[RMDB]
RNA sequence: GGGAACGACUCGAGUAGAGUCGAAAAGAUAUGGACCGAGGGAUGCUGGAGAAUGAUGACCCAGCGUAACAUCAAUCGGAAACGAUUGUGGCUGGCAAGUUUAACCAGCAUCCCUCGGUCCUAAGUCCGUGGUCUAUUGGUUCGCCAAUAGACCACGAAAAGAAACAACAACAACAAC
Reactivity to DMS in 0.01 (KOAc 150mM, MgCl2 10mM, bicine 150mM(pH8.5), 24C), signal-to-noise 2, nucleotides 027 to 126: g030a090u000a300u010g000g000a030c010c000g000a000g010g000g030a020u010g000c000u000g000g000a300g020a060a150u020g010a040u000g000a300c300c030c010a010g000c030g000u000a030a120c220a030u010c000a010a010u000c000g000g000a080a090a300c000g000a000u010u000g000u000g000g010c030u000g030g000c050a020a230g000u000u000u040a200a150c010c000a010g010c040a040u000c000c040c000u000c000g000g010u010c000c010u000a000a110g000u000c090